[RMDB]
RNA sequence: GGGAACGACUCGAGUAGAGUCGAAAACAGCGCUCGUCAGGUGCCGCAUUGGGUUGGAUGGUGAAGUGUUGCAAUACCGUGCGUAGCACCACGUCGAUCUCCAGAUUGGCUAAGGCAGCCCCGAUGCGGUAUCGGGUGACUUCGGUCACCCGAUACCAAAAGAAACAACAACAACAAC
Reactivity to 2A3 in 0.01 (KOAc 150mM, MgCl2 10mM, bicine 150mM(pH8.5), 24C), signal-to-noise 3, nucleotides 027 to 126: c020a010g040c020g020c020u090c070g130u100c060a080g000g020u020g000c000c000g030c040a030u110u300g010g000g020u000u020g090g030a070u060g010g080u160g060a100a100g090u090g070u210u080g030c030a070a060u060a160c010c030g070u050g010c050g050u070a010g000c000a000c010c000a000c020g010u000c000g010a010u060c050u070c060c020a040g070a130u060u090g070g000c010u060a090a090g040g010c010a030g030c000c000c000c000g020a040u050g030c040
Reactivity to DMS in 0.01 (KOAc 150mM, MgCl2 10mM, bicine 150mM(pH8.5), 24C), signal-to-noise 1, nucleotides 027 to 126: c080a170g000c070g000c000u010c080g000u010c080a140g010g000u000g000c020c010g070c000a000u000u010g020g010g070u000u000g000g020a030u020g020g000u020g020a160a110g020u110g000u010u000g000c040a030a060u000a040c010c050g000u060g000c020g040u000a130g000c000a120c000c020a020c160g060u070c030g000a020u030c100u010c070c060a020g000a040u010u010g040g000c020u010a060a080g010g010c050a040g000c080c000c010c030g000a030u000g010c090
An RNA of 177 nucleotides, treated with 2A3 and DMS and read out base by base. The data come from the RNA Mapping Database (RMDB), library OK1LIB. 2A3 is a SHAPE reagent: it acylates the 2'-hydroxyl of flexible nucleotides of all four kinds. For DMS, 1,579 sequencing reads were counted.